[RMDB]
RNA sequence: GGGAACGACUCGAGUAGAGUCGAAAAGAUAUGGACCCAGAACUACUCCGAUUCUUUGCAUCGAUCUCGGAAACGAGGGAGCAAAGAGGAGCUGGGUCCUAAGUCAAAAUCCAGCUUCGGCUGGAAACGAAGUCAUUAUCUUCGGAUAAUGACUUCGAAAAGAAACAACAACAACAAC
Reactivity to DMS in 0.01 (KOAc 150mM, MgCl2 10mM, bicine 150mM(pH8.5), 24C), signal-to-noise 2, nucleotides 027 to 126: g000a030u000a300u020g020g000a010c010c000c000a000g000a120a080c110u020a270c000u000c010c030g000a190u000u020c000u000u020u000g010c020a300u010c210g020a110u020c010u000c000g000g000a080a040a150c000g030a020g000g000g000a050g000c000a010a010a020g000a060g010g080a010g000c020u000g000g010g020u000c000c000u000a000a050g020u000c050a080a090a130a150u000c000c000a000g000c010u000u000c190g000g000c000u000g020g010a000a030a080
Reactivity to 2A3 in 0.01 (KOAc 150mM, MgCl2 10mM, bicine 150mM(pH8.5), 24C), signal-to-noise 2, nucleotides 027 to 126: g010a020u040a020u090g000g010a000c000c030c000a000g040a160a090c300u300a090c010u090c000c020g300a300u300u060c010u030u010u030g020c060a220u300c170g110a190u100c020u000c000g000g080a070a030a060c010g010a020g000g060g010a060g000c020a000a000a020g040a040g020g000a000g000c000u020g000g000g000u000c010c000u000a010a000g000u020c000a000a000a000a180u000c000c000a000g020c000u030u200c300g190g000c000u000g000g000a040a000a000